[RMDB]
The record gives the reactivity of an RNA of 177 nucleotides to DMS and 2A3. Reactivities are rounded to 0.1 and cut off at 0 and 3. The 2A3 profile rests on 4,413 reads.

RNA sequence: GGGAACGACUCGAGUAGAGUCGAAAACAGGGUUCGACGGCUCGGUCGCGCUCGGUAGCGGCACGACGCUCGCCGCGGCGAACCCCACCGGCAGCGCGACGAUCACGACGAGCUCGGGCGGCCAGUACUGAUCAGGUAGUUUCGACUACCUGAUCAGAAAAGAAACAACAACAACAAC
Reactivity to DMS in 0.01 (KOAc 150mM, MgCl2 10mM, bicine 150mM(pH8.5), 24C), signal-to-noise 6, nucleotides 027 to 126: c070a140g010g000g000u000u000c000g020a100c030g000g000c120u000c010g010g000u000c000g010c030g000c000u010c000g020g000u000a060g010c160g010g000c300a070c020g000a030c040g000c030u000c110g010c060c200g000c030g000g010c030g000a060a110c020c000c010c040a010c030c010g010g000c220a040g010c010g000c010g010a030c020g000a070u000c060a100c150g020a300c030g010a020g000c010u000c010g010g000g010c030g000g010c020c020a100g010u000a120
Reactivity to 2A3 in 0.01 (KOAc 150mM, MgCl2 10mM, bicine 150mM(pH8.5), 24C), signal-to-noise 3, nucleotides 027 to 126: c030a060g080g060g000u190u200c010g020a020c000g010g000c020u000c030g110g070u020c010g000c000g000c010u020c000g030g020u030a040g000c140g000g000c050a020c090g120a050c040g060c100u060c090g090c030c030g000c030g000g000c020g070a070a100c020c010c000c000a010c000c010g060g030c070a010g000c040g000c000g000a010c010g030a080u110c070a040c240g120a010c010g000a000g020c050u070c040g030g040g010c010g030g030c010c010a020g030u060a080